[RMDB]
RNA sequence: GGGAACGACUCGAGUAGAGUCGAAAAUGCCUCCGCUCGCGGUCCGCUGGCAUUUGCCAGCAACCCGUCAAGCGUCAUAACAUAUACCACUUGCGGUAUAGCAACCAUCAAAGAUCGCAUUUGACAGGGGGUAGUACGGUUUCGACCGUACUACCCCAAAAGAAACAACAACAACAAC
Reactivity to 2A3 in 0.01 (KOAc 150mM, MgCl2 10mM, bicine 150mM(pH8.5), 24C), signal-to-noise 2, nucleotides 027 to 126: u030g100c000c010u090c020c000g000c000u070c000g040c060g000g000u000c050c040g000c000u000g000g000c000a070u190u140u300g000c010c000a000g000c000a000a000c000c000c000g000u000c050a030a000g010c000g010u000c000a050u180a210a050c140a050u110a010u000a000c000c030a020c070u120u150g060c100g000g000u010a000u030a030g000c020a050a000c040c000a080u180c060a000a270a000g060a000u070c050g000c000a010u020u000u000g070a060c070a080g010